[RMDB]
RNA sequence: GGGAACGACUCGAGUAGAGUCGAAAAUGAUGGUGAGUAGCGGCGAGAGCAGUUCGGCAUAGUCACACGGCCCAGCGCGGCGGCGUCGCUGCGGUCGCGCCGGCGGGCGCGUACGUGGACGAACUCCUCCUAUGACCACGUUCGCGUGGUCAUAGGAAAAAGAAACAACAACAACAAC
Reactivity to DMS in 0.01 (KOAc 150mM, MgCl2 10mM, bicine 150mM(pH8.5), 24C), signal-to-noise 3, nucleotides 027 to 126: u010g000a090u010g010g000u000g000a060g010u000a060g010c050g000g020c090g010a120g020a100g020c090a050g010u000u000c030g010g000c040a040u010a070g020u010c130a050c060a040c040g000g000c020c010c010a210g000c000g020c010g000g000c000g000g000c040g020u020c280g010c180u020g000c030g020g030u000c020g030c020g010c020c080g010g020c170g000g000g000c000g020c060g010u020a030c080g030u000g020g040a080c020g000a050a060c070u000c100c060
Reactivity to 2A3 in 0.01 (KOAc 150mM, MgCl2 10mM, bicine 150mM(pH8.5), 24C), signal-to-noise 1, nucleotides 027 to 126: u120g050a020u070g010g050u050g060a050g010u050a010g050c040g060g000c050g000a110g000a000g020c050a000g020u010u000c020g040g000c020a080u100a070g060u070c040a000c010a010c110g030g000c020c000c010a000g010c040g000c010g030g020c010g060g000c030g050u110c070g030c120u110g010c040g010g010u020c000g000c000g000c010c010g100g020c010g030g040g020c090g000c010g060u020a030c040g010u070g060g040a040c000g020a030a030c020u050c020c000
Chemical mapping of a 177-nucleotide RNA with DMS and 2A3. For 2A3, 1,724 sequencing reads were counted. Source: RMDB library OK2TRN, as collected in RNAgym. Values cover nucleotides 27 to 126. For DMS the reverse transcriptase was MarathonRT. The RNA was probed in 150 mM KOAc, 10 mM MgCl2 and 150 mM bicine (pH 8.5) at 24 C. As a SHAPE reagent, 2A3 marks flexible, mostly unpaired nucleotides at the ribose 2'-OH.